An RNA of 177 nucleotides, treated with DMS and 2A3 and read out base by base. For 2A3, 1,040 sequencing reads were counted. The DMS profile rests on 829 reads. For DMS the reverse transcriptase was MarathonRT.
[RMDB]
RNA sequence: GGGAACGACUCGAGUAGAGUCGAAAACAACACCAAGCCUGGAGGAUUCACUGUUGAAGUGGUGAACAAUAAUAAUUCAAUGGUAAUGACUGGAAUGAGGGUGCAGGUGGGCACUCAGGCCAUAGAAGCACCUAUACCCAUUCGUGGGUAUAGGUGCAAAAGAAACAACAACAACAAC
Reactivity to DMS in 0.01 (KOAc 150mM, MgCl2 10mM, bicine 150mM(pH8.5), 24C), signal-to-noise 1, nucleotides 027 to 126: c130a100a080c080a080c020c010a100a110g010c040c000u030g000g000a050g040g000a290u000u000c050a010c060u010g010u020u000g010a100a090g030u000g000g020u010g000a100a070c190a100a130u030a000a110u020a070a070u000u000c030a050a030u010g000g000u020a050a100u000g000a180c050u010g000g000a010a050u000g000a090g000g020g030u000g000c000a130g000g010u000g000g010g100c000a120c080u030c030a060g010g000c010c070a060u000a090g010a070a060
Reactivity to 2A3 in 0.01 (KOAc 150mM, MgCl2 10mM, bicine 150mM(pH8.5), 24C), signal-to-noise 1, nucleotides 027 to 126: c000a000a040c010a030c030c000a040a000g070c000c010u040g050g010a040g000g000a030u120u110c030a050c000u000g080u090u130g090a130a020g000u010g100g000u030g090a030a010c060a060a090u190a130a060u090a040a100u020u080c050a020a050u050g020g000u100a070a060u060g090a100c140u010g040g100a070a090u120g030a120g000g050g050u030g040c000a010g000g160u090g060g030g000c010a020c030u070c050a020g100g000c010c010a030u070a070g130a050a000
Record summary: Values cover nucleotides 27 to 126. The reactions ran in a buffer of 150 mM KOAc, 10 mM MgCl2 and 150 mM bicine (pH 8.5), at 24 C.